[RMDB]
RNA sequence: GGGAACGACUCGAGUAGAGUCGAAAAAAGGUGGCCGACAGCGGAUCCAGGUUGUGCGCGUCGUCGACCACCAGCAGCAGAUCGCCAGCAUCACCGGUCAGGGAACUACGCGCCGCCCGCAGCAGCGCGCAGUAUUUUACUUCGGUAAAAUACUGCGAAAAGAAACAACAACAACAAC
Reactivity to 2A3 in 0.01 (KOAc 150mM, MgCl2 10mM, bicine 150mM(pH8.5), 24C), signal-to-noise 2, nucleotides 027 to 126: a000a000g010g000u010g010g000c010c000g010a000c000a020g020c010g050g070a050u110c110c060a090g200g060u230u140g080u150g100c010g000c020g070u140c080g010u000c000g010a030c000c010a010c000c010a010g000c000a010g000c000a010g020a100u090c040g000c020c010a000g010c020a030u060c020a000c040c000g020g050u030c030a040g050g000g050a080a030c020u060a020c090g000c010g000c030c010g010c020c000c000g020c010a030g000c010a000g030c030g010
Reactivity to DMS in 0.01 (KOAc 150mM, MgCl2 10mM, bicine 150mM(pH8.5), 24C), signal-to-noise 6, nucleotides 027 to 126: a100a090g010g020u000g010g010c010c010g020a020c010a120g000c020g010g010a090u000c080c110a120g010g010u000u000g030u000g020c050g010c030g000u000c160g010u000c020g000a040c000c000a020c010c010a050g000c080a080g000c060a050g000a070u000c050g010c040c030a060g000c040a060u010c060a080c060c040g000g000u000c060a100g010g010g010a070a070c100u000a080c090g010c050g010c030c040g010c020c010c040g010c070a070g000c060a050g010c110g010

Chemical mapping of a 177-nucleotide RNA with 2A3 and DMS. The RNA was probed in 150 mM KOAc, 10 mM MgCl2 and 150 mM bicine (pH 8.5) at 24 C. For 2A3 the reverse transcriptase was SuperScript II with manganese. DMS adducts were read by reverse transcription with MarathonRT.